[RMDB]
RNA sequence: GGGAACGACUCGAGUAGAGUCGAAAAGAUGCUUCUGACUGGGAGCCGCUGUGGGCAUACCAUCACAGUGUCUGACUUCAUGGAGUAUGUCAAGAAGGCAAACAAGACCAAGGCGCGGCUGGACAGCCGACGGGUUGUCUUUCGAGACAACCCGUCGAAAAGAAACAACAACAACAAC
Reactivity to DMS in 0.01 (KOAc 150mM, MgCl2 10mM, bicine 150mM(pH8.5), 24C), signal-to-noise 3, nucleotides 027 to 126: g020a130u010g010c030u000u000c010u000g000a090c110u000g010g010g000a060g000c020c000g020c040u010g040u010g020g000g010c110a090u030a150c080c080a080u000c070a060c110a030g000u000g010u010c030u000g000a070c020u000u000c070a060u010g000g010a090g020u010a030u010g030u010c010a090a140g010a090a070g000g010c060a040a080a100c160a050a060g000a150c050c080a090a110g010g010c100g000c030g000g010c010u010g030g000a170c110a060g000c100
Reactivity to 2A3 in 0.01 (KOAc 150mM, MgCl2 10mM, bicine 150mM(pH8.5), 24C), signal-to-noise 2, nucleotides 027 to 126: g020a010u070g000c020u020u010c010u040g150a160c030u030g010g000g060a020g000c020c030g000c030u080g000u110g100g000g020c060a120u120a130c060c010a060u080c020a040c000a040g040u030g050u070c010u070g050a060c020u010u040c050a090u180g030g000a060g090u120a060u130g050u080c010a020a080g070a030a080g130g030c020a090a190a050c050a110a040g050a090c000c000a040a020g020g000c020g030c000g000g080c000u020g090g050a040c050a000g010c010